RNA sequence: GGGAACGACUCGAGUAGAGUCGAAAAUGUCUACAUUUUUGUAGUCCAGUACUCUCCUCUCUCAUGCUACCAUCCUACCUAGAGAGAGAGGAGAGAAAGUGGUAGGAUGGUAGCUUCUGGCUAAGAAGGGAAUAGGAUGGUUCGCCAUCCUAUUCCCAAAAGAAACAACAACAACAAC
Reactivity to DMS in 0.01 (KOAc 150mM, MgCl2 10mM, bicine 150mM(pH8.5), 24C), signal-to-noise 1, nucleotides 027 to 126: u010g000u000c000u000a010c010a050u050u000u010u000u000g000u000a010g010u000c000c070a150g040u110a300c050u000c000u000c000c000u040c000u000c000u010c070a210u040g040c000u000a010c000c020a020u000c040c000u000a000c000c050u060a110g000a010g000a020g000a000g000a010g030g020a030g010a000g000a000a110a130g000u040g000g030u000a000g010g000a000u010g030g000u000a010g010c030u030u000c020u000g000g000c290u000a090a160g000a130a020